[RMDB]
Annotation: An RNA of 207 nucleotides, treated with 2A3 and read out base by base. Reactivities are given for positions 27 through 156. It was measured as part of the RMDB library OK3TST. As a SHAPE reagent, 2A3 marks flexible, mostly unpaired nucleotides at the ribose 2'-OH. 2A3 adducts were read by reverse transcription with SuperScript II with manganese.
RNA sequence: GGGAACGACUCGAGUAGAGUCGAAAAGCGACUGCGACAUACAUAUCUACUUAGACUGCUAUGUGGAUCGUUCGAAAGAUAAAACCACACAGAUAGUCGUACGUAGUAAACCAAAUACAACAACAAGUUGGCACGAGGAUCAGUACGAAACUACCAAGUCCCGCGGUUAAUUCGUUAACCGCGGGACAAAAGAAACAACAACAACAAC
Reactivity to 2A3 in 0.01 (KOAc 150mM, MgCl2 10mM, bicine 150mM(pH8.5), 24C), signal-to-noise 1, nucleotides 027 to 156: g060c030g000a000c150u050g040c030g060a030c040a010u170a170c000a000u080a060u060c000u000a000c000u000u060a000g000a010c000u020g000c000u050a020u000g040u000g010g010a080u120c120g050u080u040c000g110a070a090a000g020a020u120a000a110a060a060c000c000a000c000a000c000a000g140a300u080a060g000u000c000g020u000a010c060g020u000a000g050u100a040a020a000c050c040a080a000a000u200a010c130a100a010c000a040a000c000a050a210g050u000u080g000g030c040a010c090g030a000g000g000a110u130c020a000g020u040a090c040g000a010a030a060c010u270a080c170c000a130a000